Source information:
The record gives the reactivity of an RNA of 177 nucleotides to 2A3 and DMS. For DMS, 1,349 sequencing reads were counted. Values cover nucleotides 27 to 126. The reactions ran in a buffer of 150 mM KOAc, 10 mM MgCl2 and 150 mM bicine (pH 8.5), at 24 C. The data come from the RNA Mapping Database (RMDB), library M2PK50.

RNA sequence: GGGAACGACUCGAGUAGAGUCGAAAAAGAAUAGUUUUCGAACUAUUCUCACGUCGACCUUGGGAAACCCUGAGGCGCGAUCCCACGCGAUCGUCUGUUCGAACACCUGGUUGUUCGCAACCAGGAACAUCAAGGCAGUGUUCGCACUGCCUUGAUGAAAAGAAACAACAACAACAAC
Reactivity to 2A3 in 0.01 (KOAc 150mM, MgCl2 10mM, bicine 150mM(pH8.5), 24C), signal-to-noise 1, nucleotides 027 to 126: a010g010a000a000u020a000g010u040u000u060u180c190g040a020a020c010u000a010u010u000c000u010c000a030c030g130u160c070g060a300c010c030u050u020g020g000g010a200a300a210c040c020c010u000g000a030g010g000c040g000c000g020a010u020c010c060c000a020c040g100c030g060a090u080c010g100u050c210u170g100u050u070c030g060a080a020c040a050c060c010u000g000g000u010u000g020u070u010c230g010c050a000a000c000c000a010g010g030a000a000
Reactivity to DMS in 0.01 (KOAc 150mM, MgCl2 10mM, bicine 150mM(pH8.5), 24C), signal-to-noise 2, nucleotides 027 to 126: a050g010a030a030u000a010g030u000u000u000u020c130g040a010a050c000u000a010u000u000c000u010c090a140c100g020u000c010g030a210c010c000u000u000g000g000g000a120a110a120c250c000c000u000g000a010g000g020c030g010c040g030a090u000c000c000c000a180c210g010c010g000a030u010c120g020u000c060u000g000u000u010c040g010a100a110c210a120c010c000u010g010g000u000u000g030u000u000c170g030c010a000a010c010c000a000g000g000a010a060